Notes: An RNA of 177 nucleotides, treated with 2A3 and DMS and read out base by base.
[RMDB]
RNA sequence: GGGAACGACUCGAGUAGAGUCGAAAAUCUUUCUUUGGAAAACGUUUUGAAGUCUGGUUGGAUUUGUCACAUCAUGCCUGUUGCCUAGCACUGCCACAGAUGUCCUUAUCUCACAACAAAAGACUGCAUGUGGGAAAAAGUUCGCUUUUUCCCACAUAAAAGAAACAACAACAACAAC
Reactivity to 2A3 in 0.01 (KOAc 150mM, MgCl2 10mM, bicine 150mM(pH8.5), 24C), signal-to-noise 3, nucleotides 027 to 126: u020c000u000u070u000c020u060u080u070g040g000a010a080a030a080c040g040u010u030u040u180g070a070a030g020u000c040u100g060g000u000u010g000g060a060u010u070u040g070u110c080a020c010a120u090c020a060u140g030c000c000u060g040u160u040g010c020c010u010a010g000c000a030c090u030g000c000c010a040c000a030g010a030u040g030u020c000c030u010u010a050u050c030u000c010a100c010a060a110c010a020a160a020a040g030a030c000u010g010c040
Reactivity to DMS in 0.01 (KOAc 150mM, MgCl2 10mM, bicine 150mM(pH8.5), 24C), signal-to-noise 3, nucleotides 027 to 126: u040c060u010u000u000c040u030u000u010g010g000a080a090a080a090c120g010u020u010u010u010g000a090a060g000u000c020u000g000g010u000u010g010g010a060u010u000u010g000u010c070a050c080a050u030c090a110u000g000c110c050u030g000u030u010g010c000c050u010a070g030c040a040c030u030g020c040c020a040c060a080g010a050u000g000u010c120c000u020u010a050u000c010u000c070a110c080a060a050c130a100a080a080a060g010a060c070u000g000c220

For DMS the reverse transcriptase was MarathonRT.
The data come from the RNA Mapping Database (RMDB), libraries RFM100 and RFMREP.
For 2A3, 1,504 sequencing reads were counted.